[RMDB]
RNA sequence: GGGAACGACUCGAGUAGAGUCGAAAACAGGAGUCUUUUAUGUAUGUACUGGUAACAGGUGGUAGCGGUUACAUUGGUAGUCAUACCUGUGUGCAAUUGAUUGAAGCUGGCUAUCAGCCAGUUAUCCCAACCAGUUCACGUUCGCGUGAACUGGUUGAAAAGAAACAACAACAACAAC
Reactivity to 2A3 in 0.01 (KOAc 150mM, MgCl2 10mM, bicine 150mM(pH8.5), 24C), signal-to-noise 1, nucleotides 027 to 126: c020a000g030g020a010g070u010c070u050u200u000u040a130u160g070u020a010u090g050u100a060c020u040g000g050u030a060a020c010a040g050g000u020g000g040u060a030g000c040g010g030u040u000a020c020a040u040u000g060g000u050a010g030u060c050a090u020a090c000c010u000g030u000g000u010g000c040a120a140u070u060g130a120u040u100g050a100a070g020c020u030g140g000c000u070a080u300c050a010g030c000c000a030g000u040u030a000u030c000c000
Reactivity to DMS in 0.01 (KOAc 150mM, MgCl2 10mM, bicine 150mM(pH8.5), 24C), signal-to-noise 2, nucleotides 027 to 126: c050a110g010g000a150g010u000c030u000u000u010u010a060u020g010u000a070u010g020u000a080c030u000g000g020u010a080a070c070a050g020g000u000g000g010u010a030g000c060g000g010u000u000a030c030a080u000u000g010g000u000a020g000u010c250a080u000a020c030c000u000g000u000g030u000g000c120a050a120u000u000g010a100u000u000g000a110a120g020c020u000g000g000c000u000a090u000c180a080g020c010c000a010g010u000u000a060u000c020c080